[RMDB]
RNA sequence: GGGAACGACUCGAGUAGAGUCGAAAAAAGUAUGUUACAAUAGGCAACCUGCAGCCAACUUCUACAUUGUAGGAUGCUGUUCACAGAUCAAAUGGCAGUGGGUGCAUCAUGUAAGCUAAUGAUGCGCUUAAGAUAUGAUCGGUCCUUAUUGCGAGAGGCUUAUCAACUAGUUCGCUAGUUGAUAAGCAAAAGAAACAACAACAACAAC
Reactivity to DMS in 0.01 (KOAc 150mM, MgCl2 10mM, bicine 150mM(pH8.5), 24C), signal-to-noise 3, nucleotides 027 to 156: a050a040g010u000a060u010g020u000u010a070c100a060a110u000a090g020g000c020a050a070c030c010u010g010c010a110g010c070c010a090a070c070u010u000c060u010a080c060a090u000u000g010u000a050g000g040a080u000g010c010u000g040u000u010c040a090c060a130g010a070u000c030a030a050a080u010g000g010c040a090g020u000g020g000g010u000g010c000a000u000c000a010u000g040u000a110a230g040c220u000a050a030u000g000a010u000g000c010g030c020u010u010a080a100g010a150u000a100u000g000a020u000c010g020g000u010c060c100u000u010a070u000u000g010c000g010a120g000a130g000
Reactivity to 2A3 in 0.01 (KOAc 150mM, MgCl2 10mM, bicine 150mM(pH8.5), 24C), signal-to-noise 7, nucleotides 027 to 156: a000a000g210u200a140u160g080u060u070a030c060a060a050u040a080g030g000c030a040a020c000c030u030g000c010a020g010c010c040a080a060c040u100u040c020u040a060c020a260u130u260g010u020a010g010g040a040u080g010c000u020g030u140u100c090a050c030a100g030a030u020c020a000a050a110u090g120g000c040a040g050u080g020g040g000u000g000c000a000u000c000a000u020g060u170a130a090g050c050u070a070a010u010g000a000u000g000c020g010c000u010u010a030a010g030a040u090a060u110g030a040u040c030g010g040u090c010c010u080u100a070u060u090g050c050g010a090g010a030g160